RNA sequence: GGGAACGACUCGAGUAGAGUCGAAAAAGCCUUUGCCAGCCAUUCUUUCCCUUUUUGCUUCCAAACUCCUCAACUGGGAACCUUCAUAUGUGCAGUAUUUAUAUUGGAUCAUACUGGUGAUUAUAAACUACGUACCUAAGUUCGCUUAGGUACGUAGAAAAGAAACAACAACAACAAC
Reactivity to DMS in 0.01 (KOAc 150mM, MgCl2 10mM, bicine 150mM(pH8.5), 24C), signal-to-noise 3, nucleotides 027 to 126: a080g010c040c020u010u010u000g010c030c020a080g020c030c050a050u000u010c070u010u000u000c010c010c010u000u000u010u010u000g010c040u000u000c030c030a080a090a140c100u000c020c020u010c060a050a100c070u010g000g010g000a100a090c070c030u000u000c110a070u010a020u010g010u000g000c020a050g010u000a010u010u000u010a050u010a070u040u000g000g010a040u010c050a050u000a060c070u010g000g010u000g010a100u010u000a080u020a100a080a180
Reactivity to 2A3 in 0.01 (KOAc 150mM, MgCl2 10mM, bicine 150mM(pH8.5), 24C), signal-to-noise 2, nucleotides 027 to 126: a000g050c000c000u020u050u080g060c010c000a010g030c000c000a030u030u010c010u020u050u000c000c000c000u000u030u000u060u060g040c010u070u000c020c030a080a110a120c030u040c020c000u070c040a040a060c060u010g050g000g010a020a020c000c010u010u080c020a070u060a040u220g080u090g010c000a000g030u070a090u020u170u010a150u030a070u090u100g050g010a040u040c000a010u040a090c040u050g080g000u030g090a090u030u200a080u050a120a010a000